[RMDB]
RNA sequence: GGGAACGACUCGAGUAGAGUCGAAAAGGAACCGAGCCCGGUCGGCCCGCUCGCGGGCCCACGAGCCGCGGCGCGCCAGGCGGGCGGCCGAGGCCCAGACCACCAGGGGGCGCACCCGGACGUGGGGCGCUCUAAUCCGGUUCGCCGGAUUAGAGCGAAAAGAAACAACAACAACAAC
Reactivity to 2A3 in 0.01 (KOAc 150mM, MgCl2 10mM, bicine 150mM(pH8.5), 24C), signal-to-noise 2, nucleotides 027 to 126: g070g010a070a020c030c040g020a040g000c000c000c000g020g020u020c020g250g300c000c000c010g020c010u030c020g030c000g000g120g020c000c010c000a030c050g140a080g090c070c070g040c170g030g000c060g000c010g000c030c010a020g040g040c000g000g000g000c000g010g040c020c000g040a100g010g000c000c000c000a040g030a030c000c000a000c010c030a040g000g020g010g030g050c120g040c060a070c000c000c000g010g010a030c040g000u040g010g020g050g020
Reactivity to DMS in 0.01 (KOAc 150mM, MgCl2 10mM, bicine 150mM(pH8.5), 24C), signal-to-noise 2, nucleotides 027 to 126: g000g010a100a140c030c030g000a220g060c010c000c030g000g020u000c070g090g010c020c000c000g050c040u000c300g020c050g000g020g020c080c020c010a020c160g000a040g050c210c020g000c200g020g000c010g020c030g000c050c300a080g000g010c010g020g010g020c000g000g000c000c020g100a120g010g010c000c030c040a050g000a180c030c010a080c020c030a280g000g050g000g000g000c100g000c070a150c010c000c030g000g010a120c170g010u030g000g010g000g000
Chemical mapping of a 177-nucleotide RNA with 2A3 and DMS.
The data come from the RNA Mapping Database (RMDB), library OK1LIB.
The RNA was probed in 150 mM KOAc, 10 mM MgCl2 and 150 mM bicine (pH 8.5) at 24 C.
For 2A3 the reverse transcriptase was SuperScript II with manganese.